Structure probing data (DMS and 2A3) for a 177-nucleotide construct.
The 2A3 profile rests on 1,307 reads.
It was measured as part of the RMDB library M2PK90.
For 2A3 the reverse transcriptase was SuperScript II with manganese.

[RMDB]
RNA sequence: GGGAACGACUCGAGUAGAGUCGAAAAUGAAAUAAAGUGUACCAAAUGGUAGGUACACACCAAGUGUGCGGUGGUCGCACACAACCAGCAGUCAAUAGAGACUGCAAAACCUAACCAAAGAUAAAAACAUGCUAGUCUAGUUCGCUAGACUAGCAUGAAAAGAAACAACAACAACAAC
Reactivity to DMS in 0.01 (KOAc 150mM, MgCl2 10mM, bicine 150mM(pH8.5), 24C), signal-to-noise 1, nucleotides 027 to 126: u000g010a140a060a130u020a020a090a080g070u010g000u000a040c000c000a030a050a150u000g000g000u000a070g000g030u000a020c000a000c000a080c160c100a080a130g000u000g000u000g010c010g000g010u000g040g040u020c000g010c000a000c000a000c000a030a090c180c190a130g000c000a000g000u000c000a100a200u000a100g000a180g010a060c000u020g000c030a010a060a020a020c160c110u000a010a060c100c060a030a080a090g000a100u030a100a050a000a060a120
Reactivity to 2A3 in 0.01 (KOAc 150mM, MgCl2 10mM, bicine 150mM(pH8.5), 24C), signal-to-noise 2, nucleotides 027 to 126: u090g000a050a070a000u190a120a090a010g000u000g000u020a020c010c000a000a130a110u220g090g030u070a080g000g000u010a010c000a010c000a000c000c010a140a000g000u010g000u000g010c040g000g110u180g110g230u300c010g000c000a010c010a000c000a000a060c020c010a000g000c000a010g000u000c000a010a040u070a160g220a000g020a170c000u000g040c000a000a000a000a000c010c000u020a020a050c040c030a060a210a050g120a060u140a130a100a010a000a020